About this RNA
The record gives the reactivity of an RNA of 177 nucleotides to 2A3 and DMS. 2A3 adducts were read by reverse transcription with SuperScript II with manganese. Values are in units of 0.01, from 0 to 300, in steps of 10. The DMS profile rests on 13,127 reads. The reactions ran in a buffer of 150 mM KOAc, 10 mM MgCl2 and 150 mM bicine (pH 8.5), at 24 C. Source: RMDB library M2PK50, as collected in RNAgym.
RNA sequence: GGGAACGACUCGAGUAGAGUCGAAAAGCGGGUAACUUCGGUUACCCGCAAAGACGCGUCUCGUCGCGUCGCCGUCCCGUCGCGGCGCGUCGCGUCGCGAGAAAAGGACGAAGUUCGCUUCGUCCAACAUCUUAACUUGGUUCGCCAAGUUAAGAUGAAAAGAAACAACAACAACAAC
Reactivity to 2A3 in 0.01 (KOAc 150mM, MgCl2 10mM, bicine 150mM(pH8.5), 24C), signal-to-noise 7, nucleotides 027 to 126: g000c000g000g000g020u030a010a010c010u060u100c180g070g000u040u000a000c010c000c010g000c000a000a000a000g000a000c000g030c000g010u010c020u030c180g160u110c000g000c000g000u010c000g010c040c040g090u050c020c010c000g020u010c010g000c000g010g000c000g000c030g260u130c100g000c010g000u010c000g000c030g010a040g020a000a090a010a030g000g000a000c010g000a010a000g000u030u140c200g030c110u000u000c000g000u000c000c000a000a010
Reactivity to DMS in 0.01 (KOAc 150mM, MgCl2 10mM, bicine 150mM(pH8.5), 24C), signal-to-noise 6, nucleotides 027 to 126: g020c000g000g000g020u000a010a000c000u000u010c200g020g010u000u000a010c000c000c000g010c000a000a020a050g010a030c010g010c000g000u000c170u000c140g010u000c000g010c000g000u000c000g010c140c110g000u000c030c040c010g000u000c020g020c000g020g000c000g010c030g000u010c110g010c010g020u000c010g020c040g010a050g010a050a060a120a140g010g000a010c000g000a010a010g010u000u010c200g000c000u000u000c000g010u000c000c000a080a090